An RNA of 177 nucleotides, treated with 2A3 and read out base by base.
RNA sequence: GGGAACGACUCGAGUAGAGUCGAAAAUUCGCAUCCACUGAUUUCGACUGGUCUGUCUUAGAUAAUAAAGACGGUAAAGUUUACAUUAUCCAAUUAACUGCACUUUCUAAGGAUAUACAGACAAUUAGAUCACGAGUCAUUUCGAUGACUCGUGAUCAAAAGAAACAACAACAACAAC
Reactivity to 2A3 in 0.01 (KOAc 150mM, MgCl2 10mM, bicine 150mM(pH8.5), 24C), signal-to-noise 2, nucleotides 027 to 126: u080u040c000g050c000a090u000c140c000a050c140u090g210a300u040u110u180c080g060a030c000u000g010g000u030c000u010g030u060c000u000u000a060g000a030u060a080a040u040a040a290a000g140a000c050g000g040u140a120a080a000g000u000u100u010a190c130a130u090u260a100u170c170c130a000a050u080u000a050a130c050u000g050c190a060c000u000u010u000c160u000a000a000g000g000a000u200a000u060a090c000a000g060a000c000a000a130u140u090a110

Reactivities are given for positions 27 through 126. The RNA was probed in 150 mM KOAc, 10 mM MgCl2 and 150 mM bicine (pH 8.5) at 24 C. Source: RMDB library OK1LIB, as collected in RNAgym.